[RMDB]
Source: RMDB library TTRDES, as collected in RNAgym.
An RNA of 177 nucleotides, treated with 2A3 and DMS and read out base by base.
For DMS, 21,179 sequencing reads were counted.
RNA sequence: GGGAACGACUCGAGUAGAGUCGAAAAGAUAUGGACGACAUCGAUCUUGGGUGGAGCCUAAAUCGGAAACGAUUUGAGGCGCUGACCAAGGGAGUCGUCCUAAGUCAAACUCACGUUCGCGUGAGAACAAGUGUUAAAUCUUCGGAUUUAACACUUGAAAAGAAACAACAACAACAAC
Reactivity to 2A3 in 0.01 (KOAc 150mM, MgCl2 10mM, bicine 150mM(pH8.5), 24C), signal-to-noise 7, nucleotides 027 to 126: g040a020u090a060u190g000g000a000c000g000a000c030a250u300c100g110a070u030c020u010u010g030g010g030u200g040g110a020g000c000c000u020a010a010a010u010c000g030g020a090a050a050c010g010a020u010u030u080g230a050g000g000c010g040c140u300g050a060c000c000a000a010g000g010g010a030g000u000c000g000u000c000c000u000a040a000g010u000c020a030a060a140c000u000c000a010c000g050u130u110c300g000c010g130u000g020a000g030a010a050
Reactivity to DMS in 0.01 (KOAc 150mM, MgCl2 10mM, bicine 150mM(pH8.5), 24C), signal-to-noise 9, nucleotides 027 to 126: g010a060u000a300u010g000g000a040c000g020a010c010a300u000c170g000a050u010c000u000u000g000g000g020u000g000g000a060g010c000c010u000a020a010a010u000c000g010g010a140a090a250c010g010a020u000u000u000g010a030g010g010c000g000c010u000g000a050c000c000a010a020g000g000g000a030g020u000c000g010u000c000c000u000a010a070g010u000c050a110a110a250c000u000c000a010c010g020u000u020c250g020c020g010u000g000a010g000a110a200
Values cover nucleotides 27 to 126. For DMS the reverse transcriptase was MarathonRT. For 2A3, 29,533 sequencing reads were counted. The reactions ran in a buffer of 150 mM KOAc, 10 mM MgCl2 and 150 mM bicine (pH 8.5), at 24 C.